This 177-nucleotide RNA was probed chemically with DMS and 2A3. The data come from the RNA Mapping Database (RMDB), libraries RFM100 and RFMREP. The reactions ran in a buffer of 150 mM KOAc, 10 mM MgCl2 and 150 mM bicine (pH 8.5), at 24 C.

RNA sequence: GGGAACGACUCGAGUAGAGUCGAAAAGAAAACUGAAAAGCAACCCGGAAGGGCUGUAAAAAGAGCCUGAAACCAAGCAGUGAAAACUUUAUAGGGCACUAAAGGAAUGAUCUCGAAAGAGGGACCGCAUCACCGUACUAUUCGUAGUACGGUGAUGAAAAGAAACAACAACAACAAC
Reactivity to DMS in 0.01 (KOAc 150mM, MgCl2 10mM, bicine 150mM(pH8.5), 24C), signal-to-noise 3, nucleotides 027 to 126: g010a110a070a100a090c070u000g000a080a060a090a180g020c010a070a080c040c020c000g020g070a160a140g000g010g010c020u050g030u020a000a070a080a100a070g000a080g000c010c000u000g010a060a120a080c090c070a090a070g030c090a010g020u010g000a060a080a070a120c010u000u000u060a110u010a090g000g000g050c040a070c060u000a070a060a100g000g010a260a100u020g010a080u030c010u000c000g000a050a060a130g000a010g000g000g000a020c030c060g000
Reactivity to 2A3 in 0.01 (KOAc 150mM, MgCl2 10mM, bicine 150mM(pH8.5), 24C), signal-to-noise 3, nucleotides 027 to 126: g080a010a050a000a030c050u080g010a050a070a040a060g050c010a020a030c000c000c000g060g040a070a060g040g000g000c020u070g010u170a000a030a040a030a080g070a000g010c000c020u050g000a020a010a000c010c000a080a000g040c020a010g000u010g080a000a050a000a060c010u060u040u030a160u210a080g050g000g040c030a010c050u090a070a040a080g070g020a100a080u130g060a050u050c050u020c030g030a110a020a020g040a030g030g010g050a000c000c010g010